[RMDB]
RNA sequence: GGGAACGACUCGAGUAGAGUCGAAAACGCAACCAGCAGGGUCAGGGCGUGAACCUCAACCAGACGAUGCAGCUGCAGAUGCAGCUGGCCCGCAUCCAGCAGCAGCAGCAGCUGGCGGCUCGCCAGCGAUGCACCUGUUAUUCGUAACAGGUGCAUCAAAAGAAACAACAACAACAAC
Reactivity to 2A3 in 0.01 (KOAc 150mM, MgCl2 10mM, bicine 150mM(pH8.5), 24C), signal-to-noise 7, nucleotides 027 to 126: c040g010c020a040a100c040c030a040g060c050a050g060g000g010u040c020a030g060g080g000c020g020u040g040a050a060c000c010u070c040a040a090c040c030a040g040a140c060g060a070u100g020c020a010g010c010u010g000c010a020g010a160u070g010c010a020g020c030u010g010g010c000c010c020g000c020a020u030c010c020a040g000c000a000g000c000a000g000c010a000g000c000a010g000c000u010g010g010c010g040g040c060u080c080g000c010c010a010g010c020
Reactivity to DMS in 0.01 (KOAc 150mM, MgCl2 10mM, bicine 150mM(pH8.5), 24C), signal-to-noise 9, nucleotides 027 to 126: c070g010c050a100a100c080c060a100g010c070a100g010g010g020u000c050a060g010g010g020c040g020u000g000a080a090c030c020u000c070a070a110c080c060a100g010a080c150g000a110u000g010c020a040g010c000u000g010c010a210g000a070u000g010c000a060g010c010u000g000g000c060c020c070g000c060a040u000c010c040a070g010c010a030g010c010a090g010c040a100g000c030a090g010c000u000g000g000c020g000g000c070u010c060g000c010c010a030g010c050